[RMDB]
RNA sequence: GGGAACGACUCGAGUAGAGUCGAAAACGCACCGUUCGCGGUGCGAAAAAAGCGUACUACGACCAGAGCAGGUGACUACCCACCGUUUCCCAAAUAGGAAACGAGGUCACCCUGCGACGAAGGUCGUAUCGCAAAAACGGUGUAUUCGUACACCGAACACUGUUUGUGUCUUCGGACACAAACAGUGAAAAGAAACAACAACAACAAC
Reactivity to 2A3 in 0.01 (KOAc 150mM, MgCl2 10mM, bicine 150mM(pH8.5), 24C), signal-to-noise 3, nucleotides 027 to 156: c020g000c000a000c020c000g000u050u080c290g030c040g070g000u000g050c000g010a030a000a020a000a000a000g040c030g060u130a090c070u010a010c020g000a000c000c000a020g000a010g010c010a000g020g000u000g010a000c020u130a150c010c040c010a030c010c030g000u000u000u020c030c010c010a200a260a110u290a140g000g010a000a000a000c000g000a010g000g000u000c000a040c150c020c010u000g000c000g070a070c030g070a080a050g000g000u020c000g000u000a000u000c000g010c000a000a050a050a000a050c010g000g000u000g010u010a040u020u110c260g020u050a010c000a000c000c000g000a030a000
Reactivity to DMS in 0.01 (KOAc 150mM, MgCl2 10mM, bicine 150mM(pH8.5), 24C), signal-to-noise 2, nucleotides 027 to 156: c000g000c000a000c010c000g030u010u030c170g010c050g010g070u000g000c000g010a000a040a040a090a040a110g000c020g030u020a070c090u000a010c040g050a030c000c000a160g050a300g050c020a100g000g000u000g000a070c000u000a020c020c000c040a300c140c010g000u000u000u010c000c000c020a030a200a090u000a020g000g010a000a040a000c000g000a170g010g000u000c010a010c020c030c070u010g030c000g030a160c050g040a110a110g000g000u000c000g020u000a000u000c000g000c010a110a060a050a010a100c020g020g000u000g030u000a020u020u020c210g030u000a050c040a030c000c000g020a040a140